RNA sequence: GGGAACGACUCGAGUAGAGUCGAAAAUACCUUCAAGAGUGAGAUAUGUAAAUUCAGUAACCCUCCUAUGACGUAAAUGGUACGCUACUAACGAAUAAUAAAGUCAAAGGGCGUAGUUAUAGGGUAUUUUGCAAUAUUAGUUCGCUAAUAUUGCAAAAAAAGAAACAACAACAACAAC
Reactivity to 2A3 in 0.01 (KOAc 150mM, MgCl2 10mM, bicine 150mM(pH8.5), 24C), signal-to-noise 6, nucleotides 027 to 126: u040a010c010c000u040u080c060a100a020g050a050g120u120g040a040g050a060u110a060u220g120u190a080a100a140u160u070c020a000g050u050a110a160c000c000c000u000c000c000u010a010u020g000a000c010g110u100a050a060a100u140g110g020u040a010c000g000c010u010a000c000u000a030a010c020g050a010a010u220a210a010u180a070a080a010g020u000c010a140a300a000g010g000g020c000g000u010a030g000u010u000a010u010a010g010g020g000u050a090u000
Reactivity to DMS in 0.01 (KOAc 150mM, MgCl2 10mM, bicine 150mM(pH8.5), 24C), signal-to-noise 7, nucleotides 027 to 126: u010a090c020c010u000u020c100a120a110g010a080g020u000g010a060g000a090u030a040u020g000u010a060a070a100u010u010c060a080g010u020a090a110c040c020c010u020c010c000u010a010u000g010a010c010g030u020a060a090a100u030g010g030u010a010c010g000c010u000a010c020u000a070a010c010g000a060a090u040a130a160u020a090a110a130g000u000c010a010a040a020g000g000g000c000g010u000a040g010u000u000a010u000a000g010g000g010u010a040u010
This 177-nucleotide RNA was probed chemically with 2A3 and DMS. For 2A3 the reverse transcriptase was SuperScript II with manganese. The RNA was probed in 150 mM KOAc, 10 mM MgCl2 and 150 mM bicine (pH 8.5) at 24 C.